Source: RMDB library OK3TST, as collected in RNAgym. The record gives the reactivity of an RNA of 207 nucleotides to DMS and 2A3. Values cover nucleotides 27 to 156. The RNA was probed in 150 mM KOAc, 10 mM MgCl2 and 150 mM bicine (pH 8.5) at 24 C. For DMS, 3,792 sequencing reads were counted.

[RMDB]
RNA sequence: GGGAACGACUCGAGUAGAGUCGAAAAUGUGCCUUUAACUCAAAAGAAAGAAGUUCAUUUGGAGCCACUUUUAGAUGCUUUCACAUGUUAACUGCCAACCUAAAAGUCUCUUAGCCUAUACAUGAAAGUGUGGUUUUUCCAAGUUUGAGACUUAAUAGUACUACUAUCUCUUCGGAGAUAGUAGUACAAAAGAAACAACAACAACAAC
Reactivity to DMS in 0.01 (KOAc 150mM, MgCl2 10mM, bicine 150mM(pH8.5), 24C), signal-to-noise 2, nucleotides 027 to 156: u010g000u000g040c020c030u010u010u010a050a140c040u000c050a120a100a080a240g010a090a140a130g020a060a070g010u000u010c020a140u000u000u000g000g000a060g000c040c020a020c030u020u000u010u000a150g010a160u010g030c000u000u000u000c040a060c040a080u000g020u000u030a060a060c080u000g010c050c070a060a070c020c020u000a060a060a050a070g010u000c040u000c000u000u000a090g010c040c090u010a120u000a070c040a060u010g000a020a020a070g040u000g000u000g040g020u000u000u010u010u000c050c040a030a270g010u000u010u010g020a150g010a110c000u000u000a060a060u000a180
Reactivity to 2A3 in 0.01 (KOAc 150mM, MgCl2 10mM, bicine 150mM(pH8.5), 24C), signal-to-noise 3, nucleotides 027 to 156: u050g010u040g030c010c010u050u070u100a090a080c020u040c100a060a030a030a090g100a050a120a020g030a050a040g010u040u090c060a060u060u030u070g030g010a000g020c030c020a020c030u080u070u050u160a100g060a130u160g020c010u010u030u060c040a060c010a070u040g010u030u060a090a030c050u090g040c020c040a050a050c050c000u120a110a120a020a010g030u010c010u000c010u090u050a040g000c010c020u150a120u020a110c010a020u050g010a020a010a040g020u020g010u010g020g050u010u040u060u170u000c020c030a030a010g010u020u060u060g020a020g000a000c000u050u050a060a040u100a150